[RMDB]
RNA sequence: GGGAACGACUCGAGUAGAGUCGAAAAUAAAACCGCGAAGAGAACCAAGCCAUGAGACACAAGGAGGGAUGUCUCAAGGCUUGGUUCUCGACUAGUGUCGAGUCGUUCCCAAUCCCUCCGCAAAAAACCCUUCUUAUAUCUUCGGAUAUAAGAAGGGAAAAGAAACAACAACAACAAC
Reactivity to DMS in 0.01 (KOAc 150mM, MgCl2 10mM, bicine 150mM(pH8.5), 24C), signal-to-noise 2, nucleotides 027 to 126: u000a090a080a100a110c100c140g030c110g040a120a160g010a160g000a010a000c000c000a000a020g020c000c010a150u000g000a000g000a020c010a050c200a030a040g010g010a000g000g020g000a030u000g000u000c000u000c000a010a030g000g000c000u000u000g000g010u000u000c000u010c000g000a020c010u010a040g010u010g010u000c000g010a010g030u000c000g010u010u000c000c000c000a000a000u000c000c010c010u000c000c010g050c160a000a040a050a060a040a040
Reactivity to 2A3 in 0.01 (KOAc 150mM, MgCl2 10mM, bicine 150mM(pH8.5), 24C), signal-to-noise 3, nucleotides 027 to 126: u090a010a120a020a040c100c050g060c120g130a170a110g110a010g000a150a000c000c000a000a000g000c000c010a010u040g010a000g000a000c000a000c010a060a050g000g000a000g000g000g000a000u000g000u000c000u000c010a000a010g000g010c010u000u000g000g000u000u000c000u000c000g000a000c000u020a010g070u020g070u030c000g000a000g010u000c000g000u000u010c000c010c010a000a010u000c000c000c000u000c010c010g010c010a100a100a010a010a010a010